[RMDB]
RNA sequence: GGGAACGACUCGAGUAGAGUCGAAAACGCCGGACGCGUCCCUGCCCCUUGUACACACCGCCCGUCGCUCCUACCGACUGGGCGCGGCGGCGAGCGUCCCGGACCGGAAGGGCCGCGAGCCCCCGCGGAGAUAUAGGUAGUUCGCUACCUAUAUCUCAAAAGAAACAACAACAACAAC
Reactivity to DMS in 0.01 (KOAc 150mM, MgCl2 10mM, bicine 150mM(pH8.5), 24C), signal-to-noise 9, nucleotides 027 to 126: c100g010c010c030g000g010a060c030g000c020g010u000c020c040c010u000g000c020c010c070c070u020u010g000u010a070c130a090c160a110c130c040g010c030c000c010g010u010c020g010c050u000c040c050u010a130c210c030g000a040c060u020g010g000g020c020g010c030g000g010c210g000g000c070g010a160g000c020g000u000c030c010c010g000g010a100c070c060g000g010a160a120g000g000g010c000c010g010c100g000a230g010c000c000c020c010c010g010c120g010
Reactivity to 2A3 in 0.01 (KOAc 150mM, MgCl2 10mM, bicine 150mM(pH8.5), 24C), signal-to-noise 9, nucleotides 027 to 126: c030g020c010c010g020g020a030c030g010c020g080u050c020c010c000u020g020c010c000c000c010u060u150g110u180a040c080a010c010a030c070c020g020c010c010c000g010u010c010g010c020u050c010c020u040a090c030c030g080a070c070u190g010g000g000c010g000c000g000g000c000g000g000c010g010a010g000c010g000u010c000c040c000g020g040a040c020c010g050g030a090a080g070g000g000c010c000g080c040g030a050g000c000c000c000c000c000g010c040g040

Conditions: 150 mM KOAc, 10 mM MgCl2 and 150 mM bicine (pH 8.5), 24 C. An RNA of 177 nucleotides, treated with DMS and 2A3 and read out base by base.